[RMDB]
RNA sequence: GGGAACGACUCGAGUAGAGUCGAAAAGUCCCAGAAUCUCGUAAAUAAUCUGGAAAAACCAUAAAUGCCGAUAACGGCUACAUGGCCGCUGCUUAAGUAAGUGGUCCGUCCUUAGUUUAGUGCGUCUAUGGCUUAGCUAAAGGGCGUCAAAUACAUAUCCUUAAAUCGUGUUCGCACGAUUUAAGGAAAAAGAAACAACAACAACAAC
Reactivity to DMS in 0.01 (KOAc 150mM, MgCl2 10mM, bicine 150mM(pH8.5), 24C), signal-to-noise 1, nucleotides 027 to 156: g000u000c040c000c000a070g000a040a110u000c070u010c060g020u000a070a140a090u000a060a070u020c030u000g020g010a080a090a090a110a070c000c000a020u000a090a070a120u010g010c000c000g000a170u000a140a140c080g070g010c020u000a090c210a100u000g040g030c060c020g020c030u010g000c040u020u010a140a290g040u010a060a140g030u000g000g000u010c070c010g010u000c000c010u000u000a070g010u000u000u010a020g040u010g000c030g000u000c120u010a170u000g000g000c000u000u000a030g050c020u000a060a010a080g010g000g000c000g000u010c050a030a080a070u000a060c040a100u000a190
Reactivity to 2A3 in 0.01 (KOAc 150mM, MgCl2 10mM, bicine 150mM(pH8.5), 24C), signal-to-noise 1, nucleotides 027 to 156: g030u050c020c000c000a000g240a000a180u220c060u080c220g110u080a060a230a000u140a080a180u010c030u060g000g000a180a030a000a000a190c060c000a060u140a140a100a110u260g010c020c000g000a060u110a300a140c020g010g000c000u030a060c080a270u110g020g000c030c000g020c000u010g000c000u070u040a110a080g030u000a060a060g000u110g010g010u160c000c000g000u000c000c000u020u000a000g020u000u030u000a030g020u060g300c060g100u050c100u100a030u110g000g000c000u080u080a000g010c000u070a270a000a000g000g020g000c010g000u010c030a010a010a010u110a030c080a050u270a000

Chemical mapping of a 207-nucleotide RNA with DMS and 2A3.
The data come from the RNA Mapping Database (RMDB), library ARCHII.
The reactions ran in a buffer of 150 mM KOAc, 10 mM MgCl2 and 150 mM bicine (pH 8.5), at 24 C.